[RMDB]
RNA sequence: GGGAACGACUCGAGUAGAGUCGAAAAGAAUGGUGGAAAAACACCGAGCUAGUUAUGGAAAAAUCUGACGGGGCCGAAAAGGGAUCCUCCAUAUCUAGCGAAAGAAAGAAAAAGGAUCCGUCAGGAAGGAUUUGAGAAUCUUCGGAUUCUCAAAUCCAAAAGAAACAACAACAACAAC
Reactivity to 2A3 in 0.01 (KOAc 150mM, MgCl2 10mM, bicine 150mM(pH8.5), 24C), signal-to-noise 1, nucleotides 027 to 126: g110a040a150u190g020g020u040g020g110a180a140a050a080a000c000a000c000c000g000a020g000c000u000a000g000u000u000a000u000g000g010a040a070a000a030a120u000c000u010g010a010c010g000g000g030g080c000c000g010a190a130a020a090g030g010g010a010u000c030c010u000c000c000a000u000a000u000c000u000a000g000c020g000a010a020a000g120a030a020a000g060a000a060a000a030a000g000g000a020u030c000c010g000u000c000a000g050g010a000a030